[RMDB]
This 177-nucleotide RNA was probed chemically with 2A3 and DMS. The DMS profile rests on 2,533 reads. The reactions ran in a buffer of 150 mM KOAc, 10 mM MgCl2 and 150 mM bicine (pH 8.5), at 24 C.

RNA sequence: GGGAACGACUCGAGUAGAGUCGAAAAGAAAAUAGCGUACAGCACACUCAGACUGUACGCUAAGUAAGAGUGUGUUCAAUAAGGUCCAAUUGAACACACACUCCGUUGGACCAAGAGUGUGAAAAAAUCGUGUAUUGAUGUUCGCAUCAAUACACGAAAAAGAAACAACAACAACAAC
Reactivity to 2A3 in 0.01 (KOAc 150mM, MgCl2 10mM, bicine 150mM(pH8.5), 24C), signal-to-noise 3, nucleotides 027 to 126: g100a010a170a020a030u060a000g010c000g010u000a000c000a000g000c060a020c010a030c120u130c030a040g080a300c040u000g000u000a000c000g000c000u010a010a010g040u040a050a030g090a080g060u010g010u000g010u000u000c000a010a030u080a190a060g050g000u030c020c010a030a060u010u020g000a010a010c000a000c010a000c000a070c060u070c050c040g140u140u200g020g000a010c000c000a040a020g080a010g030u130g010u110g070a040a050a000a000a010a100
Reactivity to DMS in 0.01 (KOAc 150mM, MgCl2 10mM, bicine 150mM(pH8.5), 24C), signal-to-noise 3, nucleotides 027 to 126: g000a120a080a120a130u000a000g000c000g000u000a010c000a020g000c050a080c030a050c110u010c080a220g010a110c000u000g000u000a020c000g020c000u000a000a030g030u000a070a050g010a110g020u000g010u010g000u000u000c000a000a010u020a080a060g010g010u000c050c040a180a080u000u000g000a010a000c000a000c000a000c000a020c120u000c020c070g010u000u000g010g010a080c050c070a060a060g000a040g020u000g010u020g000a000a050a060a040a060a090